[RMDB]
RNA sequence: GGGAACGACUCGAGUAGAGUCGAAAAGUGGGACGCUGGGCAAUGGAGCGCGAUGAGGUGUGUGGAACCCUACUGAAGCGCGCACGGUAGGAAACGCACACCGAGCGUGAGGUUGCCUGUGCUGAAGCGCGCACGGCAACCGAAAGGUGCGUAAUAACUGAUAUUCCCUGUUCGCAGGGAAUAUCAGAAAAGAAACAACAACAACAAC
Reactivity to 2A3 in 0.01 (KOAc 150mM, MgCl2 10mM, bicine 150mM(pH8.5), 24C), signal-to-noise 2, nucleotides 027 to 156: g100u090g040g130g030a010c000g000c000u000g010g010g000c030a030a020u080g150g050a070g010c000g060c010g150a300u100g040a010g000g010u000g000u010g000u000g020g020a040a030c000c010c010u010a000c000u010g050a140a010g010c000g000c000g000c000a000c000g010g000u000a000g000g010a110a000a000c000g010c000a000c000a000c010c010g000a000g000c000g040u060g000a000g030g080u000u000g000c000c000u000g000u000g020c000u010g020a080a050g000c000g010c010g000c000a010c030g000g000c000a010a010c000c000g010a100a040a010g010g000u040g010c010g020u050a020a070u140a070a030
Reactivity to DMS in 0.01 (KOAc 150mM, MgCl2 10mM, bicine 150mM(pH8.5), 24C), signal-to-noise 2, nucleotides 027 to 156: g020u010g020g020g000a060c030g000c050u010g000g030g000c020a070a120u000g030g040a300g000c000g080c030g000a140u000g010a170g010g000u000g000u010g020u020g030g010a130a250c070c040c020u000a010c000u000g000a010a030g000c010g010c000g030c050a290c040g020g050u000a040g010g000a050a030a130c040g050c000a020c000a060c000c050g000a000g050c010g020u000g000a300g030g030u000u000g000c000c020u010g000u010g000c000u030g000a080a040g030c050g020c090g000c010a300c020g000g010c000a000a050c090c030g010a110a070a120g040g070u010g010c000g010u000a100a080u000a080a180